Structure probing data (2A3 and DMS) for a 207-nucleotide construct. For DMS the reverse transcriptase was MarathonRT. For 2A3, 3,814 sequencing reads were counted. For DMS, 6,304 sequencing reads were counted. Source: RMDB library OK3TST, as collected in RNAgym.
[RMDB]
RNA sequence: GGGAACGACUCGAGUAGAGUCGAAAAGGAUGCCCUGAGCAGACAUUACUCUCAGCUGGAUGGCAGCAUUCUCCUCCACAGUUGAGGAAACUGAGGCUCCGUGAGUGUGACUUGUCCAAGGUUCAGCUGGGACUUUGAACCUAGGUCCAGCCAAAGAUCAUUAAAUACUCUUCGGAGUAUUUAAUGAAAAAGAAACAACAACAACAAC
Reactivity to 2A3 in 0.01 (KOAc 150mM, MgCl2 10mM, bicine 150mM(pH8.5), 24C), signal-to-noise 4, nucleotides 027 to 156: g070g020a050u080g020c030c000c010u040g020a030g010c030a010g090a110c020a060u080u180a090c020u010c000u010c030a010g000c010u030g010g030a080u090g090g000c030a010g000c010a030u090u020c000u030c040c000u020c000c010a050c020a040g010u040u050g030a050g030g140a040a040a000c030u030g010a030g060g020c050u080c130c080g070u170g040a040g000u020g010u040g060a190c030u080u080g030u060c030c030a080a050g150g010u020u040c010a000g010c030u050g020g030g030a020c010u070u050u090g030a030a040c010c020u010a030g000g060u010c020c030a020g010c030c010a080a070a030g130a070
Reactivity to DMS in 0.01 (KOAc 150mM, MgCl2 10mM, bicine 150mM(pH8.5), 24C), signal-to-noise 2, nucleotides 027 to 156: g020g010a080u000g000c020c010c040u010g020a090g050c060a100g040a130c050a080u000u010a070c050u000c010u000c030a000g010c010u000g000g000a090u000g000g000c060a110g000c040a070u000u000c000u010c020c010u000c000c060a240c070a140g010u000u010g000a110g030g000a070a030a030c020u000g000a100g020g000c050u010c040c030g040u010g000a080g010u010g000u000g010a080c040u010u000g010u000c020c030a100a100g010g000u000u000c020a060g010c070u000g010g000g000a020c030u000u000u000g010a050a150c060c090u010a030g000g000u000c020c010a060g030c010c020a050a080a140g010a190